[RMDB]
RNA sequence: GGGAACGACUCGAGUAGAGUCGAAAAGUACACCCUCCCUCCCUCCCAAAAGCGCGCAAAUAAAGGGAGGGACUCAGGGAUGAGUAGGCCAAAAGGCCAUAUCCCCAAGACGCGCGACGGGACAAAAGAUUUAAGCAACUUUCGAGUUGCUUAAAUCAAAAGAAACAACAACAACAAC
Reactivity to DMS in 0.01 (KOAc 150mM, MgCl2 10mM, bicine 150mM(pH8.5), 24C), signal-to-noise 2, nucleotides 027 to 126: g020u010a170c110a220c050c000c000u000c000c000c000u000c000c010c010u000c000c020c040a030a020a140a210g000c050g000c030g030c050a120a110a060u000a030a070a040g000g000g010a010g010g030g010a040c080u020c170a060g000g000g010a080u000g010a120g000u000a090g000g020c000c000a070a090a130a140g000g000c010c010a050u000a020u010c000c000c010c090a170a160g000a080c050g000c020g010c000g000a100c100g010g010g010a130c270a030a100a090a070
Reactivity to 2A3 in 0.01 (KOAc 150mM, MgCl2 10mM, bicine 150mM(pH8.5), 24C), signal-to-noise 1, nucleotides 027 to 126: g030u050a030c020a100c070c000c010u010c000c000c010u010c020c000c010u020c000c000c000a050a120a030a010g000c000g000c000g000c030a070a100a040u140a150a150a010g010g000g000a010g000g000g000a000c000u010c040a000g020g000g010a010u030g020a010g080u170a090g010g000c000c010a040a270a170a210g000g000c000c000a030u020a030u010c010c020c000c010a060a020g060a060c050g000c000g000c000g010a030c020g000g000g020a020c040a040a130a000a040

An RNA of 177 nucleotides, treated with DMS and 2A3 and read out base by base. The data come from the RNA Mapping Database (RMDB), library M2PK90. DMS adducts were read by reverse transcription with MarathonRT.